The data come from the RNA Mapping Database (RMDB), library TTRDEL. Chemical mapping of a 177-nucleotide RNA with 2A3 and DMS. As a SHAPE reagent, 2A3 marks flexible, mostly unpaired nucleotides at the ribose 2'-OH. High DMS reactivity at an A or C suggests that its Watson-Crick edge is free.
RNA sequence: GGGAACGACUCGAGUAGAGUCGAAAAGAUAUGGACCCUGGGGAGCUCAGUAUCGGAAACGAUACCUGAGCGACGAUCUGGGUCCUAAGUCAAAACAGGUAAGCAGAGUUCGCUCUGCUUACCUGAACCCAUUUACUAGGUUCGCCUAGUAAAUGGGAAAAGAAACAACAACAACAAC
Reactivity to 2A3 in 0.01 (KOAc 150mM, MgCl2 10mM, bicine 150mM(pH8.5), 24C), signal-to-noise 4, nucleotides 027 to 126: g010a010u050a050u080g000g000a010c010c040c050u170g000g010g020g030a070g010c000u010c000a000g010u010a000u000c000g000g030a070a030a040c010g000a000u010a020c010c090u010g010a000g020c000g010a010c010g020a100u060c040u030g000g000g000u000c000c000u000a020a000g000u010c030a000a010a070a150c000a000g010g000u000a000a000g000c010a000g010a010g050u120u210c230g080c130u000c000u000g000c000u010u000a000c000c000u000g000a000a000
Reactivity to DMS in 0.01 (KOAc 150mM, MgCl2 10mM, bicine 150mM(pH8.5), 24C), signal-to-noise 5, nucleotides 027 to 126: g010a030u010a300u000g000g010a010c000c010c000u010g010g000g000g000a190g010c000u000c000a010g010u000a000u000c000g010g000a100a070a150c000g010a010u000a010c170c100u000g000a010g020c000g010a050c150g000a070u000c030u000g000g000g010u000c000c000u010a010a050g000u000c040a110a070a100a260c000a000g000g000u000a000a010g000c000a010g010a020g020u000u010c270g010c000u000c000u000g000c000u000u000a000c000c010u000g000a020a080